[RMDB]
RNA sequence: GGGAACGACUCGAGUAGAGUCGAAAAACAUGGCAGAGACAUACACCGGAAAACCGUAGAGAUACGGUCUGCCUUGUAGUCGGUGUACAGGAGGUGCAAGCCUGUCGUUACGUAAUGUCGUACGCUGAGAUAUAUAGUUAUUCGUAACUAUAUAUCUAAAAGAAACAACAACAACAAC
Reactivity to DMS in 0.01 (KOAc 150mM, MgCl2 10mM, bicine 150mM(pH8.5), 24C), signal-to-noise 9, nucleotides 027 to 126: a060c070a060u030g000g010c010a030g000a100g000a060c070a120u010a050c030a030c020c020g010g000a070a060a100a070c000c000g000u000a000g000a210g000a210u000a000c000g000g000u000c030u010g020c040c060u010u010g000u010a050g010u010c020g000g010u000g010u010a020c070a060g000g000a060g000g010u010g010c150a080a090g010c010c000u000g000u020c030g000u020u020a060c100g010u020a070a070u010g000u000c020g000u020a070c080g010c050u000g000
Reactivity to 2A3 in 0.01 (KOAc 150mM, MgCl2 10mM, bicine 150mM(pH8.5), 24C), signal-to-noise 8, nucleotides 027 to 126: a000c030a040u060g020g000c010a000g020a000g010a050c000a020u080a020c020a020c020c010g060g010a030a040a010a010c000c000g000u000a000g010a000g000a030u000a010c000g000g010u000c010u030g030c000c000u010u110g060u020a020g020u010c020g000g000u010g000u010a010c020a010g020g030a020g030g040u080g020c040a020a010g050c000c000u010g020u020c020g020u040u080a030c020g010u030a030a080u080g020u040c010g000u010a010c030g000c020u020g010